[RMDB]
Chemical mapping of a 177-nucleotide RNA with 2A3. The reactions ran in a buffer of 150 mM KOAc, 10 mM MgCl2 and 150 mM bicine (pH 8.5), at 24 C. Reactivities are rounded to 0.1 and cut off at 0 and 3. For 2A3 the reverse transcriptase was SuperScript II with manganese.

RNA sequence: GGGAACGACUCGAGUAGAGUCGAAAAUCUGUCAACCAGUGACAGAUUAUGGAUUCGCACGAGAAGAAGAGAAAGUUCACAGAACUAGCACUUAAUCUUCUGUUUUUGCAGGAGAUCUAUUUGGCUGAGCUGCGUCCAUUUUCGAAUGGACGCAGCUAAAAGAAACAACAACAACAAC
Reactivity to 2A3 in 0.01 (KOAc 150mM, MgCl2 10mM, bicine 150mM(pH8.5), 24C), signal-to-noise 2, nucleotides 027 to 126: u000c000u000g000u000c000a090a000c230c130a190g220u050g030a000c000a020g030a010u000u000a000u170g000g020a000u000u000c030g030c000a030c000g000a000g010a020a160g090a150a000g090a000g100a160a050a000g060u020u000c010a070c000a300g030a010a050c000u070a090g000c000a010c020u000u060a000a000u000c000u000u000c000u000g040u000u180u000u070u300g030c000a000g000g000a050g050a000u010c000u020a110u030u060u010g010g000c050u010g010